An RNA of 177 nucleotides, treated with DMS and 2A3 and read out base by base. For 2A3 the reverse transcriptase was SuperScript II with manganese. Values cover nucleotides 27 to 126.
[RMDB]
RNA sequence: GGGAACGACUCGAGUAGAGUCGAAAAAGGAGUGCCUGCCUUUACUGUGUCAAUAAAGGUCAAGUUAUGGAAGAGGACAGAGGAAAUGUGGCCAGAGAGACCAAAGAACUGGGAGUGCACGUUAUCAAACAUUACACUUGUUCGCAAGUGUAAUGUUAAAAGAAACAACAACAACAAC
Reactivity to DMS in 0.01 (KOAc 150mM, MgCl2 10mM, bicine 150mM(pH8.5), 24C), signal-to-noise 9, nucleotides 027 to 126: a070g000g010a160g010u010g010c030c020u000g010c010c010u000u000u000a060c060u000g030u010g010u010c070a050a100u000a040a080a070g000g010u010c080a080a080g010u000u000a080u000g010g010a080a070g000a080g010g010a060c080a040g000a070g010g010a050a070a070u010g010u000g000g010c030c030a070g010a130g000a160g010a080c040c040a050a070a080g010a050a050c090u000g010g010g000a050g020u000g010c060a050c090g000u000u000a090u010c110a080
Reactivity to 2A3 in 0.01 (KOAc 150mM, MgCl2 10mM, bicine 150mM(pH8.5), 24C), signal-to-noise 8, nucleotides 027 to 126: a010g110g020a060g010u030g020c010c000u050g050c020c000u050u030u020a070c060u080g100u050g040u160c020a040a070u080a150a100a010g030g000u020c050a040a040g030u110u100a090u160g060g040a080a040g020a060g110g010a030c050a040g090a030g070g080a010a070a070u150g030u040g040g000c000c010a010g010a000g000a000g010a030c030c040a110a170a000g040a060a030c070u040g000g000g040a030g000u090g020c020a010c060g020u030u030a130u130c060a030